[RMDB]
Structure probing data (2A3) for a 177-nucleotide construct.
Reactivities are given for positions 27 through 126.
It was measured as part of the RMDB library OK1LIB.
RNA sequence: GGGAACGACUCGAGUAGAGUCGAAAAGACACCCUUCGCAGAUGACCUCCUCGUUGGUGGGUGUCGGCUCUGUUGUCAGUCACAGGCAACAGUUAACGAUCUGCGUAAAUAAAAAGAGAAGAACAAACGUGACUCACUACUUCGGUAGUGAGUCACGAAAAGAAACAACAACAACAAC
Reactivity to 2A3 in 0.01 (KOAc 150mM, MgCl2 10mM, bicine 150mM(pH8.5), 24C), signal-to-noise 2, nucleotides 027 to 126: g020a000c000a010c000c000c000u000u100c000g060c010a000g000a010u010g000a000c000c000u010c000c000u220c130g160u210u200g060g000u010g000g000g070u000g000u020c000g000g000c030u030c070u050g000u000u020g020u000c030a050g150u250c140a020c050a140g050g060c010a020a000c000a000g000u010u030a000a000c000g020a000u000c000u010g040c000g000u000a040a010a110u220a000a120a020a100a000g160a000g060a200a000g060a060a010c100a030a060a000

For 2A3, 718 sequencing reads were counted. 2A3 adducts were read by reverse transcription with SuperScript II with manganese.